[RMDB]
RNA sequence: GGGAACGACUCGAGUAGAGUCGAAAACGGCAGUGGCAUCGUAUCCCUACGUUAUGUGGGGUGUCGCUUCCUUUAAGCGUCCAAGCGACGACGGUAGAUGUCAACGUGAGUAUACGUGCUGCUAUCGUCUACUCAUGCUGUUCGCGGCAUGGGUAGAAAAAGAAACAACAACAACAAC
Reactivity to 2A3 in 0.01 (KOAc 150mM, MgCl2 10mM, bicine 150mM(pH8.5), 24C), signal-to-noise 2, nucleotides 027 to 126: c090g010g170c070a050g020u020g130g110c020a040u300c300g170u150a150u190c020c000c020u010a030c080g140u300u220a110u300g010u000g000g040g000g020u030g050u040c000g000c000u070u180c060c000u090u300u180a160a030g070c060g030u030c040c020a050a010g020c020g040a020c010g000a000c010g070g030u140a120g020a120u150g030u070c000a040a080c000g070u120g010a190g220u300a140u080a220c030g030u030g000c010u020g110c010u060a010u120c050g080
This 177-nucleotide RNA was probed chemically with 2A3. It was measured as part of the RMDB library OK1LIB. Reactivities are given for positions 27 through 126. 2A3 adducts were read by reverse transcription with SuperScript II with manganese.